[RMDB]
About this RNA:
Source: RMDB libraries RFM100 and RFMREP, as collected in RNAgym. This 177-nucleotide RNA was probed chemically with DMS and 2A3.
RNA sequence: GGGAACGACUCGAGUAGAGUCGAAAACUUCUUCGCUUCGUGUAUUUUUACUAUGGUUAAUUAUCACAUAGCGCAAACGGUCAUUUGUGUAUCACUAUUCAUAAGAUUAACUAUUUACCAGUGGUAAUAGACCACUGUUGUUCGCAACAGUGGUCUAAAAAGAAACAACAACAACAAC
Reactivity to DMS in 0.01 (KOAc 150mM, MgCl2 10mM, bicine 150mM(pH8.5), 24C), signal-to-noise 1, nucleotides 027 to 126: c120u030u030c040u000u000c000g010c020u000u000c060g000u030g010u030a010u000u000u000u000u000a070c080u000a130u030g040g010u000u000a030a030u000u000a030u010c020a030c050a070u020a010g020c020g000c130a000a030a110c210g020g000u000c050a120u040u000u000g060u000g000u000a030u000c060a130c050u000a090u000u000c170a080u030a020a130g000a030u000u000a040a100c100u030a030u020u010u020a060c070c050a040g040u000g000g000u010a070a110
Reactivity to 2A3 in 0.01 (KOAc 150mM, MgCl2 10mM, bicine 150mM(pH8.5), 24C), signal-to-noise 2, nucleotides 027 to 126: c000u070u060c000u050u020c020g000c000u000u010c080g000u000g090u110a210u010u120u000u030u080a080c010u030a080u260g030g010u080u030a130a030u020u090a090u120c000a000c020a020u010a000g000c010g070c170a140a070a040c020g080g040u150c020a040u000u000u070g010u020g010u000a040u050c000a000c130u030a180u210u090c010a050u190a170a000g000a010u060u170a030a110c060u020a060u030u040u050a020c000c020a000g000u080g060g010u070a030a100

DMS adducts were read by reverse transcription with MarathonRT. For 2A3 the reverse transcriptase was SuperScript II with manganese.